[RMDB]
RNA sequence: GGGAACGACUCGAGUAGAGUCGAAAAAUCAGCCUUCGUUCUGUAAACGGGGUUGGAUCCGACUCUCAUAGGCUCUCCAACCCAACUCCUACUCAAUACGUACUCGUCGUACAGAACGGUAACAUGUAAAACGAAGGCUGCUUCGGCAGCCUUCGAACGAUUUAUACUUCUUCGGAAGUAUAAAUCGAAAAGAAACAACAACAACAAC
Reactivity to 2A3 in 0.01 (KOAc 150mM, MgCl2 10mM, bicine 150mM(pH8.5), 24C), signal-to-noise 4, nucleotides 027 to 156: a000u070c040a030g060c020c020u050u100c010g010u000u010c010u010g020u010a030a020a140c050g000g000g000g000u000u000g010g000a050u260c020c000g100a120c040u110c030u050c130a160u200a230g000g000c000u000c000u000c010c010a000a000c000c000c000a020a010c010u030c000c010u080a100c030u050c140a080a180u110a200c100g040u050a040c080u030c160g070u030c020g010u030a000c000a000g000a010a010c000g000g010u070a040a030c050a080u170g040u260a040a110a020a030c020g000a000a000g010g000c000u000g020c010u010u040c080g060g000c000a000g000c000c000u000u000c000g000a010a000
Reactivity to DMS in 0.01 (KOAc 150mM, MgCl2 10mM, bicine 150mM(pH8.5), 24C), signal-to-noise 2, nucleotides 027 to 156: a200u000c040a080g010c040c020u000u010c000g030u010u010c000u020g020u000a120a090a060c050g040g020g020g060u000u000g000g000a020u010c030c020g000a050c020u000c080u000c200a220u000a100g010g010c020u000c130u000c010c020a060a070c030c010c010a080a040c070u000c070c000u020a070c010u020c030a060a120u000a130c260g000u010a060c070u000c050g020u000c000g000u000a050c010a050g000a030a020c020g010g000u000a060a130c080a120u000g000u000a070a080a060a250c010g000a020a020g050g030c000u020g000c030u000u000c300g020g040c010a020g030c000c000u000u000c000g000a010a080